An RNA of 207 nucleotides, treated with 2A3 and DMS and read out base by base. 2A3 adducts were read by reverse transcription with SuperScript II with manganese. The 2A3 profile rests on 1,881 reads.
RNA sequence: GGGAACGACUCGAGUAGAGUCGAAAAGCAGCCUAUGGUUUCUCACUAAGUUUAAAUUGCAGGGUCAAAAGAAAUCACAUAAUCCUACCAUUUGUUGACAGAAUCAAUACCUGUCUAGCACAUAGAUACCUGGAAAGUAUGUUCGAACUGGCGGGGAAUAAUAAUGACGGUUCGCCGUCAUUAUUAUAAAAGAAACAACAACAACAAC
Reactivity to 2A3 in 0.01 (KOAc 150mM, MgCl2 10mM, bicine 150mM(pH8.5), 24C), signal-to-noise 3, nucleotides 027 to 156: g030c050a010g030c020c020u050a110u040g050g000u020u090u020c030u000c010a050c030u080a060a070g050u120u080u140a110a170a110u130u140g000c040a060g000g000g030u040c040a050a060a080a060g050a050a100a020u140c040a030c020a080u150a090a040u090c010c020u040a070c030c040a080u070u050u130g040u020u040g040a020c010a030g060a080a090u100c070a080a060u070a180c020c000u000g010u020c020u020a020g000c020a020c000a060u030a050g060a040u050a120c010c030u030g000g090a040a020a000g030u040a010u110g060u070u050c060g010a070a050c040u020g000g020c020g030g020g000g030a030
Reactivity to DMS in 0.01 (KOAc 150mM, MgCl2 10mM, bicine 150mM(pH8.5), 24C), signal-to-noise 3, nucleotides 027 to 156: g020c040a070g000c050c030u010a040u010g010g000u000u010u000c020u000c020a180c070u000a080a150g030u000u000u010a060a070a110u010u010g010c030a040g020g030g040u000c010a070a070a110a090g000a050a060a060u010c040a080c080a110u000a050a100u010c020c010u010a070c030c040a090u010u010u000g020u010u000g020a060c030a070g010a110a300u000c080a060a120u000a090c090c010u000g000u000c010u000a070g000c050a060c060a110u000a050g010a090u000a050c050c030u000g020g010a080a060a080g000u000a040u010g010u010u000c030g020a070a070c050u000g020g030c010g020g000g000g000a120